[RMDB]
The record gives the reactivity of an RNA of 177 nucleotides to 2A3 and DMS.
RNA sequence: GGGAACGACUCGAGUAGAGUCGAAAACAUACUGUCUUUCAGUUGCAGGGAGAGCGUUUCGAUCCAUACCCACACGUGGGUGACCCAGCGCCCGUACAGUCGUGAGCGGGGAAUGGAGUCAUCGUAACUGCAGGAGUAUAUUCGUAUACUCCUGCAGAAAAGAAACAACAACAACAAC
Reactivity to 2A3 in 0.01 (KOAc 150mM, MgCl2 10mM, bicine 150mM(pH8.5), 24C), signal-to-noise 4, nucleotides 027 to 126: c020a020u200a060c020u050g070u150c070u070u230u120c060a050g020u060u070g060c040a050g010g050g020a080g010a000g060c030g000u050u060u040c050g030a070u020c030c010a010u040a080c010c000c000a030c000a010c080g060u100g090g010g000u010g000a030c030c000c000a050g080c050g130c000c000c010g060u140a140c060a110g080u070c040g080u070g080a050g050c060g020g010g010g020a010a040u050g030g020a080g020u020c010a040u000c020g050u080a080a070
Reactivity to DMS in 0.01 (KOAc 150mM, MgCl2 10mM, bicine 150mM(pH8.5), 24C), signal-to-noise 5, nucleotides 027 to 126: c080a100u000a070c070u000g010u010c120u000u000u010c080a070g020u000u000g020c080a090g000g000g010a050g010a070g030c060g020u000u010u000c050g020a110u010c010c030a070u000a130c010c010c010a130c140a060c160g010u000g020g010g020u000g000a060c020c020c010a070g010c280g010c010c010c000g000u010a100c130a100g010u010c070g010u000g000a160g010c090g010g000g000g010a090a070u000g000g000a100g010u000c060a030u010c040g010u010a070a160
It was measured as part of the RMDB library OK2TST. For DMS, 5,257 sequencing reads were counted. 2A3 adducts were read by reverse transcription with SuperScript II with manganese. Conditions: 150 mM KOAc, 10 mM MgCl2 and 150 mM bicine (pH 8.5), 24 C.